[RMDB]
RNA sequence: GGGAACGACUCGAGUAGAGUCGAAAAAACUGUUUCAAUAAGUCCAAACGCAGAAAACUUUUUCGAUUUCAUCAUGAACGCGCUGCGCGUACAAUUGUUUGACGCCAAAACUUUGCCUUACAUUUCGAAAAAAAAUGUAAAUGACACGGCCACCCAAACGACUACAGAGUUUCGACUCUGUAGUCGUAAAAGAAACAACAACAACAAC
Reactivity to 2A3 in 0.01 (KOAc 150mM, MgCl2 10mM, bicine 150mM(pH8.5), 24C), signal-to-noise 1, nucleotides 027 to 156: a000a010c060u030g020u020u060u000c000a040a030u040a090a030g020u000c040c040a050a000a010c090g040c030a000g170a090a140a140a150c050u120u040u070u120u130c030g030a100u060u110u050c020a100u010c020a040u140g100a070a010c020g000c010g000c140u140g020c080g000c000g010u010a050c030a040a120u050u100g090u080u060u070g020a000c010g000c030c000a010a060a060a060c060u110u170u150g000c000c000u010u010a000c000a000u000u040u090c100g130a120a000a010a000a040a000a000a000u010g000u000a000a080a140u060g010a010c010a000c070g000g000c000c010a030c030c020c030a020a140